[RMDB]
RNA sequence: GGGAACGACUCGAGUAGAGUCGAAAAUGUGGAGGAAAUUGGCAAAAGGAAGAUUAAUAUAUGGUUUAGAAGUCCCUGAUCCAAUAGAAGCAAUGAUUGGCUUUCUCAUUCUUGGGAGUGAAAAUUGCACAAGAUCCAACUUCGGUUGGAUCUUGUGAAAAGAAACAACAACAACAAC
Reactivity to DMS in 0.01 (KOAc 150mM, MgCl2 10mM, bicine 150mM(pH8.5), 24C), signal-to-noise 1, nucleotides 027 to 126: u000g010u000g020g010a080g000g010a020a100a120u010u000g000g030c050a030a050a150a090g000g020a100a030g000a120u000u000a050a090u000a110u020a090u000g000g000u000u000u000a120g000a150a260g010u000c010c000c000u000g000a150u010c020c050a000a040u000a140g000a100a100g000c010a030a080u000g000a140u000u000g000g010c060u020u020u000c020u080c020a110u000u000c120u000u010g010g000g010a040g030u000g000a050a060a110a060u000u010g010